[RMDB]
RNA sequence: GGGAACGACUCGAGUAGAGUCGAAAAACGGAUGGUACGCCAUCCGACCAUUGGGUAGAAGCGUUCAAUCAGCACCGUGACGGUGCAGAUGGGAAAAUGCCCAUGAUACGCACCAUACGUGGUGCGAAAAAGCCAUCGGUGUUCGCACCGAUGGCAAGUAUUACAGUCACUUCGGUGACUGUAAUACAAAAGAAACAACAACAACAAC
Reactivity to 2A3 in 0.01 (KOAc 150mM, MgCl2 10mM, bicine 150mM(pH8.5), 24C), signal-to-noise 5, nucleotides 027 to 156: a000c000g000g000a000u000g000g030u050a050c200g010c030c000a000u000c000c000g010a010c000c010a100u070u090g020g000g000u030a050g050a220a030g080c060g060u090u060c030a040a060u010c020a030g000c000a000c010c010g120u210g240a170c210g020g000u010g000c020a010g000a000u020g000g050g010a000a040a000a050u030g000c000c000c000a000u030g030a020u050a030c020g000c010a000c000c000a010u040a080c250g090u030g010g000u000g000c010g010a040a020a000a010a000g000c010c000a000u010c000g000g000u010g040u050u090c230g020c080a000c000c000g000a000u000g000g010c000a000a000
Reactivity to DMS in 0.01 (KOAc 150mM, MgCl2 10mM, bicine 150mM(pH8.5), 24C), signal-to-noise 1, nucleotides 027 to 156: a130c040g040g010a020u000g020g040u020a080c260g030c060c010a010u000c010c020g000a030c050c010a180u000u000g030g010g000u000a030g000a100a080g020c080g040u000u000c030a030a050u000c010a120g020c020a010c000c000g010u000g010a180c150g050g010u000g020c010a000g000a020u000g000g000g000a050a140a110a100u000g010c000c000c000a010u010g010a110u020a070c010g000c000a020c020c000a050u000a070c240g030u000g000g010u000g000c030g010a000a010a060a110a080g020c000c000a000u000c000g010g040u000g020u000u000c230g010c000a040c000c000g000a000u000g030g010c000a000a030

Annotation: Structure probing data (2A3 and DMS) for a 207-nucleotide construct. The 2A3 profile rests on 5,421 reads. The reactions ran in a buffer of 150 mM KOAc, 10 mM MgCl2 and 150 mM bicine (pH 8.5), at 24 C. DMS adducts were read by reverse transcription with MarathonRT. The data come from the RNA Mapping Database (RMDB), library M2RFPK.